[RMDB]
Notes:
The record gives the reactivity of an RNA of 177 nucleotides to DMS and 2A3. DMS adducts were read by reverse transcription with MarathonRT. It was measured as part of the RMDB library OK2TRN. For 2A3, 1,151 sequencing reads were counted. The reactions ran in a buffer of 150 mM KOAc, 10 mM MgCl2 and 150 mM bicine (pH 8.5), at 24 C.
RNA sequence: GGGAACGACUCGAGUAGAGUCGAAAAAAUCGGCGUUGAUGGUUCCGAACUCGGUGAUGGACUCGGACAGUUGCUCCUCGUGGACUGCCCCGGUCACCAUAUUGAGCCGCCACCGAUGUAGCCGGGAGGAUUUAGUAGACUUCGGUCUACUAAAUCCAAAAGAAACAACAACAACAAC
Reactivity to DMS in 0.01 (KOAc 150mM, MgCl2 10mM, bicine 150mM(pH8.5), 24C), signal-to-noise 2, nucleotides 027 to 126: a070a050u010c020g010g020c070g000u030u010g000a060u000g000g010u000u000c040c070g000a050a150c060u010c020g010g040u000g000a070u000g010g000a040c020u020c300g070g010a070c090a040g020u010u000g000c070u010c050c090u000c140g010u010g000g020a050c000u000g000c030c000c010c050g000g000u000c040a070c070c070a070u000a100u010u000g020a030g030c030c040g030c050c010a010c010c000g000a050u010g000u000a100g000c020c020g000g000g010a150
Reactivity to 2A3 in 0.01 (KOAc 150mM, MgCl2 10mM, bicine 150mM(pH8.5), 24C), signal-to-noise 1, nucleotides 027 to 126: a010a000u060c010g010g020c060g020u040u090g090a140u090g020g050u080u010c030c000g000a030a020c010u020c010g040g000u000g040a020u010g010g050a090c030u010c060g020g030a020c030a080g030u080u050g090c010u020c050c030u050c050g130u120g040g000a020c000u050g020c060c020c000c010g000g030u050c070a050c060c030a000u050a080u090u170g040a000g000c000c010g010c010c000a020c010c010g010a010u070g050u120a020g050c000c030g060g000g010a040